Source: RMDB library ARCHII, as collected in RNAgym.
The record gives the reactivity of an RNA of 207 nucleotides to DMS and 2A3.
The DMS profile rests on 1,451 reads.
For 2A3 the reverse transcriptase was SuperScript II with manganese.
The RNA was probed in 150 mM KOAc, 10 mM MgCl2 and 150 mM bicine (pH 8.5) at 24 C.
[RMDB]
RNA sequence: GGGAACGACUCGAGUAGAGUCGAAAACCGGGGACACCCUAAAGCUUAUGAUACCAAACUAUAAUCGAAAGAUUAUAAGUGGCCAGAAUAAUUACCUGGGUAUGGUAAUAAGUCAUAAGAUAGAUGAAAAUCAAAUGGGCUAUCGCGGAUCUAAAUCGUCUCCUUCUAAGUUCGCUUAGAAGGAGACAAAAGAAACAACAACAACAAC
Reactivity to DMS in 0.01 (KOAc 150mM, MgCl2 10mM, bicine 150mM(pH8.5), 24C), signal-to-noise 1, nucleotides 027 to 156: c020c000g040g010g040g010a210c150a010c010c000c000u000a150a020a210g030c010u010u000a000u010g000a050u000a000c000c010a200a170a020c000u020a000u010a010a020u020c010g010a050a030a300g000a020u000u000a000u000a000a080g010u010g000g010c010c000a020g000a030a020u000a080a120u000u020a130c180c000u010g000g040g070u000a040u010g020g030u010a050a030u000a000a060g010u000c010a020u010a000a020g000a090u000a150g020a070u000g000a090a090a240a100u000c030a050a060a300u020g000g030g020c050u000a090u000c010g030c010g000g030a190u000c030u000a040a030a060u020c000
Reactivity to 2A3 in 0.01 (KOAc 150mM, MgCl2 10mM, bicine 150mM(pH8.5), 24C), signal-to-noise 2, nucleotides 027 to 156: c000c000g020g000g000g000a010c030a020c020c010c000u080a100a080a050g020c000u000u000a000u000g000a000u010a020c060c070a000a000a020c010u000a000u010a010a000u010c000g050a100a000a000g000a010u000u020a010u020a120a140g000u000g000g010c000c000a010g010a100a050u060a040a070u030u030a020c010c010u000g010g020g010u080a230u070g010g010u000a000a000u010a010a000g010u000c000a000u000a000a000g000a010u040a020g020a010u060g050a030a090a050a030u020c020a000a030a060u040g000g000g000c010u030a030u170c040g020c010g080g000a010u010c020u080a030a080a050u090c050
DMS adducts were read by reverse transcription with MarathonRT.